Structure probing data (DMS and 2A3) for a 207-nucleotide construct.
DMS adducts were read by reverse transcription with MarathonRT.
The reactions ran in a buffer of 150 mM KOAc, 10 mM MgCl2 and 150 mM bicine (pH 8.5), at 24 C.
The DMS profile rests on 3,096 reads.
It was measured as part of the RMDB library OK3TST.
[RMDB]
RNA sequence: GGGAACGACUCGAGUAGAGUCGAAAAAACUCAUGGCACCAUUUCCUCCAACUAUGUGAUUGGAUGCUUAGUAUAUCAAUUUGGUGUGUGUGUGUUGGGGGUGGGGGAAAUUCUAUUUAGAUAACACCAAAAAGCAACCAAGUGAUUAAUCAUGUAGAAGAUGUUGAGUUUUCGAACUCAACAUCUUAAAAGAAACAACAACAACAAC
Reactivity to DMS in 0.01 (KOAc 150mM, MgCl2 10mM, bicine 150mM(pH8.5), 24C), signal-to-noise 1, nucleotides 027 to 156: a030a090c040u010c040a220u010g000g010c050a060c020c020a150u010u000u000c010c010u020c020c020a040a200c010u000a010u000g030u000g000a050u010u000g000g000a020u000g000c010u000u000a020g020u010a130u010a080u010c080a060a260u000u010u000g020g020u010g020u000g040u000g010u010g020u010g000u100u010g000g000g010g000g000u000g000g030g040g030g000a010a050a010u010u010c100u000a150u000u000u000a120g020a170u010a080a050c030a020c000c000a010a010a040a050a230g000c060a010a090c030c010a010a050g000u010g000a080u000u000a060a030u000c030a010u000g040u000a040g010
Reactivity to 2A3 in 0.01 (KOAc 150mM, MgCl2 10mM, bicine 150mM(pH8.5), 24C), signal-to-noise 1, nucleotides 027 to 156: a000a000c040u060c080a100u070g090g000c000a070c050c020a060u070u000u000c010c010u000c000c000a010a080c030u020a000u050g000u060g020a020u000u060g050g000a050u010g010c010u040u010a060g100u110a080u030a060u230c110a180a120u010u090u010g000g000u020g010u010g000u020g000u000g000u000g000u000u120g030g000g000g000g010u070g000g010g010g010g000a010a030a010u140u110c090u130a160u150u130u030a010g010a010u060a040a000c000a000c030c020a000a070a090a040a000g030c020a000a040c040c000a030a000g040u020g030a020u040u090a020a030u060c010a000u160g070u180a000g030